Notes
Chemical mapping of a 207-nucleotide RNA with DMS and 2A3. DMS adducts were read by reverse transcription with MarathonRT. Conditions: 150 mM KOAc, 10 mM MgCl2 and 150 mM bicine (pH 8.5), 24 C. For 2A3 the reverse transcriptase was SuperScript II with manganese. Values cover nucleotides 27 to 156. For 2A3, 4,383 sequencing reads were counted.
[RMDB]
RNA sequence: GGGAACGACUCGAGUAGAGUCGAAAACCGAGUUCGCUCGGAACGAUGGGGUCCGAUAAGCACGAAGCUCAUCGAUCUGUACUGAAGCCUCCACGGUACAGGGAGAGCUAAGUGCUUUUGACGGACGGAGGCACCCUACUUGCGAUUUCGAUCGCAAGACCGUACAAAACUUCGGUUUUGUACGGUCAAAAGAAACAACAACAACAAC
Reactivity to DMS in 0.01 (KOAc 150mM, MgCl2 10mM, bicine 150mM(pH8.5), 24C), signal-to-noise 2, nucleotides 027 to 156: c020c000g000a070g040u000u000c200g000c020u000c030g030g020a050a050c080g030a140u000g000g000g000g020u000c000c030g050a110u000a010a060g040c010a030c020g010a300a090g010c010u000c000a260u010c090g000a070u010c000u000g020u000a020c010u000g010a050a120g030c020c000u010c010c000a300c010g030g000u000a010c000a050g000g010g000a030g000a030g030c000u000a080a300g010u010g000c000u000u000u010u010g000a130c000g000g000a080c030g030g030a030g040g000c000a300c000c000c000u010a160c080u000u000g000c000g010a070u000u000u010c190g000a100u000c000g000c000a050a060
Reactivity to 2A3 in 0.01 (KOAc 150mM, MgCl2 10mM, bicine 150mM(pH8.5), 24C), signal-to-noise 4, nucleotides 027 to 156: c010c000g000a010g000u120u150c230g010c120u010c020g030g040a140a080c080g080a120u150g000g000g020g040u000c010c020g100a220u080a120a000g000c010a000c010g020a130a020g000c010u010c010a120u300c040g000a000u000c000u010g000u000a000c000u020g050a220a040g000c000c000u000c010c010a020c000g010g000u000a000c000a000g000g000g000a030g000a000g000c000u000a000a040g000u000g000c000u000u000u000u010g030a010c000g000g010a010c000g000g000a010g000g000c010a010c000c020c000u100a140c050u010u010g010c000g010a020u060u090u030c230g120a030u000c010g000c000a000a010